[RMDB]
RNA sequence: GGGAACGACUCGAGUAGAGUCGAAAAAAAAGAUUUCUGAGACAAACACGCUUCACAAUGUGCGACAAAGAAACAUUGUUUAUGCAAAGGCACUUCGCAAUGUGUGCUCAAACAUUGCUUAUUCAAAAAAAGAUUUUAGACUUCGGUCUAAAAUCAAGUCCAAAUAUAGGUUCGCCUAUAUUUGGACAAAAGAAACAACAACAACAAC
Reactivity to 2A3 in 0.01 (KOAc 150mM, MgCl2 10mM, bicine 150mM(pH8.5), 24C), signal-to-noise 2, nucleotides 027 to 156: a000a000a000a000g140a080u230u200u040c070u180g110a070g040a140c130a040a210a030c100a010c030g000c010u000u010c000a000c000a010a000u010g000u020g000c010g020a050c110a070a120a020g090a020a020a000c000a000u000u000g030u080u130u120a100u110g010c060a080a030a050g190g000c000a010c020u010u020c020g000c020a000a000u000g000u000g020u000g020c070u120c180a050a060a000c000a000u000u000g000c000u040u080a160u100u130c070a060a060a000a010a010a030a040g000a020u010u000u000u000a000g000a020c000u000u070c280g050g000u000c000u020a000a020a000a010u000c000a000a000